[RMDB]
RNA sequence: GGGAACGACUCGAGUAGAGUCGAAAAUGGGUGGAGAUGAGGCGGCUCCCUCGCACUGGGGGAAGGACAAAGAGGUGGCAUCUGUAGGUCACCGUGCCCUCAACUUCCCCCAUAGAAGUAGAAUGCAGAUUUAUGCUGACUUCGGUCAGCAUAAAUCAAAAGAAACAACAACAACAAC
Reactivity to DMS in 0.01 (KOAc 150mM, MgCl2 10mM, bicine 150mM(pH8.5), 24C), signal-to-noise 2, nucleotides 027 to 126: u000g010g020g010u000g020g000a010g010a160u010g020a030g010g040c040g000g020c040u010c000c000c000u000c030g020c240a100c230u000g020g010g000g010g000a030a030g040g000a190c160a050a060a120g000a210g010g000u000g020g010c000a050u010c160u000g000u000a080g010g000u000c010a020c010c010g000u000g000c090c010c000u000c050a030a110c000u010u000c000c020c010c000c010a020u000a000g030a080a110g010u000a110g000a090a080u000g000c140a130